RNA sequence: GGGAACGACUCGAGUAGAGUCGAAAACUACCGUGCCCUACGCGUCGCCGAUCUCUUCGAUUCCCAAGGUAUUUGGUUGGUAUCGAGCAUGACUCUGGCCGCCCGCGUACACACCCUGGACGGGCGGGGCCAUAUUAGCUUUCGAGCUAAUAUGGCCAAAAGAAACAACAACAACAAC
Reactivity to DMS in 0.01 (KOAc 150mM, MgCl2 10mM, bicine 150mM(pH8.5), 24C), signal-to-noise 3, nucleotides 027 to 126: c080u000a100c070c040g020u000g000c050c020c020u000a060c090g000c060g000u000c060g020c020c030g010a060u000c060u000c040u010u000c040g000a130u000u000c010c010c010a110a080g010g020u010a050u010u000u010g010g010u000u000g010g010u000a040u010c040g010a050g000c080a080u000g000a080c080u000c040u010g010g010c020c020g000c040c010c000g000c030g050u000a090c130a090c120a150c030c010c030u000g000g010a150c050g010g000g020c010g000g000
Reactivity to 2A3 in 0.01 (KOAc 150mM, MgCl2 10mM, bicine 150mM(pH8.5), 24C), signal-to-noise 3, nucleotides 027 to 126: c020u030a070c010c040g030u060g040c000c010c010u020a030c040g050c000g060u060c020g000c020c000g060a070u020c040u000c030u100u060c030g090a090u010u020c010c000c010a030a020g170g030u140a170u150u140u110g120g000u040u100g020g010u060a020u100c030g000a010g040c080a090u120g020a080c040u010c030u070g090g000c010c010g020c000c020c020g000c010g090u190a020c040a000c000a010c020c000c000u070g070g030a060c000g010g000g010c000g020g030

An RNA of 177 nucleotides, treated with DMS and 2A3 and read out base by base. Reactivities are given for positions 27 through 126. The RNA was probed in 150 mM KOAc, 10 mM MgCl2 and 150 mM bicine (pH 8.5) at 24 C. For DMS the reverse transcriptase was MarathonRT. Reactivities are rounded to 0.1 and cut off at 0 and 3.